This 177-nucleotide RNA was probed chemically with 2A3 and DMS. The 2A3 profile rests on 1,549 reads. It was measured as part of the RMDB library M2PK50. The reactions ran in a buffer of 150 mM KOAc, 10 mM MgCl2 and 150 mM bicine (pH 8.5), at 24 C. For 2A3 the reverse transcriptase was SuperScript II with manganese.
RNA sequence: GGGAACGACUCGAGUAGAGUCGAAAAGCUGAAAGCUUCGGCUUUCAGCAAAGAAAAAGAUGUACAGCUUCUAAGGUACAUCAAGAAUAGAAGCGAAAAGUAAAAGCUUAACGUUCGCGUUAAGCAACAGAAUAGGGGAGUUCGCUCCCCUAUUCUGAAAAGAAACAACAACAACAAC
Reactivity to 2A3 in 0.01 (KOAc 150mM, MgCl2 10mM, bicine 150mM(pH8.5), 24C), signal-to-noise 2, nucleotides 027 to 126: g010c000u000g010a010a010a000g000c040u080u120c240g090g030c000u000u000u000c000a000g000c000a000a040a010g070a010a110a000a000a000g000a000u000g010u000a010c020a050g000c020u080u090c040u110a070a050g030g010u030a000c000a010u030c010a010a000g030a050a050u180a000g060a030a000g050c050g060a170a050a010a000g110u230a040a170a000a050g000c000u000u000a010a000c010g020u020u070c300g010c000g100u000u000a000a000g000c000a020a030
Reactivity to DMS in 0.01 (KOAc 150mM, MgCl2 10mM, bicine 150mM(pH8.5), 24C), signal-to-noise 1, nucleotides 027 to 126: g000c000u000g010a000a000a010g000c010u010u010c220g060g010c000u000u000u010c000a000g000c000a020a050a090g000a140a120a040a040a100g000a060u000g000u000a020c010a210g000c050u000u000c070u020a050a130g050g000u000a010c000a000u010c020a070a080g000a080a110u010a130g000a040a020g030c000g000a120a050a030a110g000u000a090a060a110a040g010c010u000u000a010a000c000g010u010u010c190g000c010g020u010u010a010a000g000c000a150a140